This 177-nucleotide RNA was probed chemically with 2A3 and DMS. For 2A3, 5,955 sequencing reads were counted. 2A3 adducts were read by reverse transcription with SuperScript II with manganese. For DMS, 5,143 sequencing reads were counted. The RNA was probed in 150 mM KOAc, 10 mM MgCl2 and 150 mM bicine (pH 8.5) at 24 C. Reactivities are rounded to 0.1 and cut off at 0 and 3. Values cover nucleotides 27 to 126.
RNA sequence: GGGAACGACUCGAGUAGAGUCGAAAACAGCUGCGACGUGGCGGCUUCCCAGGCUGGGGCCGGGAAGCACGUCCCGCCAGCCCGCAGCCCGGGGACGGCGGGGUCAGGCGCACAAAGGGCCGCGGGGGCUCGAAUUAUUAUUCGUAAUAAUUCGAGCAAAAGAAACAACAACAACAAC
Reactivity to 2A3 in 0.01 (KOAc 150mM, MgCl2 10mM, bicine 150mM(pH8.5), 24C), signal-to-noise 3, nucleotides 027 to 126: c010a010g050c020u060g030c030g130a150c020g140u030g000g020c010g020g010c000u010u020c000c000c040a090g020g000c040u270g030g060g300g000c000c000g000g000g010a010a000g060c140a090c060g010u010c000c000c000g010c010c000a020g020c010c000c000g010c000a010g000c000c020c000g000g000g000g080a090c090g040g020c020g030g030g030g020u070c060a030g100g050c020g000c030a010c020a020a080a010g010g000g000c010c000g000c000g000g010g010g060
Reactivity to DMS in 0.01 (KOAc 150mM, MgCl2 10mM, bicine 150mM(pH8.5), 24C), signal-to-noise 3, nucleotides 027 to 126: c110a160g010c050u000g010c080g010a110c020g010u000g000g010c020g000g000c020u000u000c010c000c000a090g070g000c010u010g030g010g030g030c030c020g010g010g010a020a030g020c020a050c030g010u000c000c010c010g010c020c020a080g010c000c010c010g020c030a080g010c010c010c010g000g010g020g020a140c130g000g000c010g000g000g000g000u010c090a090g000g000c030g000c050a070c080a040a070a200g000g000g010c000c020g020c020g000g000g020g010